RNA sequence: GGGAACGACUCGAGUAGAGUCGAAAAAGAUUGUUCGCAAUCUCCUUUAGCGUACUACAAUAAUACCGCUGAUGACCUGUAGAGAACGCUGUCCCAAAUAGGACAGCGACUACAGCAAGGCGAUUAUUGUAUCGCGAACCAUGCGCUUCGGCGCAAACCCUUUUGCGUGGUUCGCCACGCAAAAGGGAAAAGAAACAACAACAACAAC
Reactivity to 2A3 in 0.01 (KOAc 150mM, MgCl2 10mM, bicine 150mM(pH8.5), 24C), signal-to-noise 1, nucleotides 027 to 156: a000g000a020u020u010g000u010u100c190g080c140a000a010u040c050u260c000c070u230u060u230a060g000c020g000u130a010c220u000a000c000a020a060u050a010a010u000a260c000c140g000c030u080g090a300u060g120a000c010c060u000g030u010a080g010a080g020a200a010c000g060c000u000g000u000c000c000c000a160a160a070u300a100g010g000a000c000a000g000c030g080a100c000u000a000c000a000g000c030a010a010g000g000c000g000a000u000u000a000u000u000g030u000a010u190c050g000c050g060a140a060c070c000a030u020g040c000g000c000u050u050c300g050g000c000g000c000a020a020a020